Chemical mapping of a 207-nucleotide RNA with 2A3 and DMS. Source: RMDB library RNAMAK, as collected in RNAgym. In probing experiments dimethyl sulfate is read out at A N1 and C N3, which are open when not base-paired. The RNA was probed in 150 mM KOAc, 10 mM MgCl2 and 150 mM bicine (pH 8.5) at 24 C.

[RMDB]
RNA sequence: GGGAACGACUCGAGUAGAGUCGAAAAGGGGUCGGAAGCAAGUCUGAUCGACGAUCUGUGGUAGAGCAACUACCUGAAGCCUCCACGGGUAGUUUAAGCCCACAGGGAGAUCAGUCACCUUCCGACGGAGGCACCCGUGGCGAUCUUCGGAUCGCAAUGGUCGAUAAGUAUUCGUACUUAUCGACCAAAAAGAAACAACAACAACAAC
Reactivity to 2A3 in 0.01 (KOAc 150mM, MgCl2 10mM, bicine 150mM(pH8.5), 24C), signal-to-noise 2, nucleotides 027 to 156: g010g020g010g000u010c000g010g020a020a010g030c090a130a300g060u000c000u000g000a000u000c020g120a180c000g020a030u000c010u000g000u020g000g050u140a180g040a040g180c120a010a000c000u010a000c000c000u010g020a120a040g010c000c000u010c000c020a010c000g020g000g000u010a000g000u000u000u020a010a010g000c000c000c010a010c000a000g010g000g000a020g000a000u000c000a010g010u020c010a010c020c020u000u010c000c000g000a000c010g000g000a010g000g030c010a040c000c000c020g100u130g110g030c010g000a010u010c000u030u090c260g120g000a000u000c010g000c020a000a080
Reactivity to DMS in 0.01 (KOAc 150mM, MgCl2 10mM, bicine 150mM(pH8.5), 24C), signal-to-noise 1, nucleotides 027 to 156: g010g000g020g010u010c000g020g040a040a060g000c120a150a260g010u000c010u000g020a020u000c020g020a090c170g010a050u000c000u000g010u000g000g010u000a100g020a160g030c100a060a010c000u000a000c040c000u010g030a130a100g050c050c010u010c010c000a300c030g020g000g030u000a020g020u000u000u000a090a300g040c080c000c000a020c000a040g000g000g000a100g000a000u010c020a010g000u000c180a060c110c010u000u010c030c010g000a030c000g010g020a020g100g020c060a110c020c000c040g040u000g000g000c000g010a010u000c010u000u000c300g050g020a000u000c000g090c020a050a060